[RMDB]
RNA sequence: GGGAACGACUCGAGUAGAGUCGAAAAGAUAUGGACUAUCAACCUUUCGAAGAACUUUAUCGGAAACGAUAAAGGGAGAAAGCGUUGAGUAGUCCUAAGUCAAACACACGUGGUUCGCCACGUGUGAGAGAGUAGUAAGCUUCGGCUUACUACUCUCAAAAGAAACAACAACAACAAC
Reactivity to 2A3 in 0.01 (KOAc 150mM, MgCl2 10mM, bicine 150mM(pH8.5), 24C), signal-to-noise 3, nucleotides 027 to 126: g040a010u080a060u170g000g010a000c000u010a020u060c010a010a010c000c000u020u010u040c260g150a300a050g020a080a030c000u000u000u000a000u000c000g000g080a130a030a040c010g020a010u000a000a010a010g000g040g010a040g010a000a020a000g120c230g060u000u030g040a010g010u020a010g000u000c000c010u000a000a010g040u000c040a050a190a050c010a000c000a000c020g010u010g010g100u080u120c300g070c120c000a000c020g010u000g000u010g000a020
Reactivity to DMS in 0.01 (KOAc 150mM, MgCl2 10mM, bicine 150mM(pH8.5), 24C), signal-to-noise 3, nucleotides 027 to 126: g020a040u000a300u000g000g010a030c010u000a030u000c000a020a010c000c000u000u000u000c000g000a110a200g050a160a180c000u020u000u000a040u000c000g000g000a150a110a200c000g010a000u000a000a000a000g010g030g000a070g000a000a010a010g000c300g020u000u000g010a030g030u000a020g020u000c000c000u000a000a120g000u000c070a100a120a250c010a000c000a010c000g030u000g000g010u010u010c300g000c010c000a010c010g020u000g020u000g000a050